[RMDB]
RNA sequence: GGGAACGACUCGAGUAGAGUCGAAAAUCAUUGGCUACGCUGCGCGCUGCGUUGCCUAGGCUUCAGAUGCUUCGUACUGUUGCCAACGUUGCAAUUUCCAAACGCUAAUGCGAAAGUGUGCAAACAAAACGGAGCAAUUGUUCGCAAUUGCUCCGUUAAAAGAAACAACAACAACAAC
Reactivity to DMS in 0.01 (KOAc 150mM, MgCl2 10mM, bicine 150mM(pH8.5), 24C), signal-to-noise 1, nucleotides 027 to 126: u000c080a130u000u010g010g010c000u000a000c030g030c010u010g080c040g030c100g000c010u000g000c020g030u000u000g010c000c010u000a140g040g010c030u000u000c010a070g030a120u000g010c060u000u030c170g020u000a130c050u000g010u000u000g000c010c020a110a170c120g030u000u010g000c080a050a050u000u000u020c040c050a130a100a170c060g010c060u000a050a190u010g000c050g030a110a060a040g010u000g000u010g000c060a140a150a080c200a070a030
Reactivity to 2A3 in 0.01 (KOAc 150mM, MgCl2 10mM, bicine 150mM(pH8.5), 24C), signal-to-noise 1, nucleotides 027 to 126: u110c010a020u060u060g010g040c010u010a010c000g030c040u120g000c060g070c000g000c050u010g020c000g000u000u030g000c010c000u030a020g000g000c010u020u000c020a040g030a160u150g050c040u110u120c150g020u030a070c000u030g040u040u020g010c000c000a010a060c110g080u080u070g040c050a100a100u000u000u040c020c010a140a060a000c020g010c010u090a210a000u200g000c010g060a080a050a000g020u090g010u010g030c040a000a070a040c040a000a000

The record gives the reactivity of an RNA of 177 nucleotides to DMS and 2A3. The RNA was probed in 150 mM KOAc, 10 mM MgCl2 and 150 mM bicine (pH 8.5) at 24 C. For DMS, 639 sequencing reads were counted. For DMS the reverse transcriptase was MarathonRT. For 2A3 the reverse transcriptase was SuperScript II with manganese. Values cover nucleotides 27 to 126.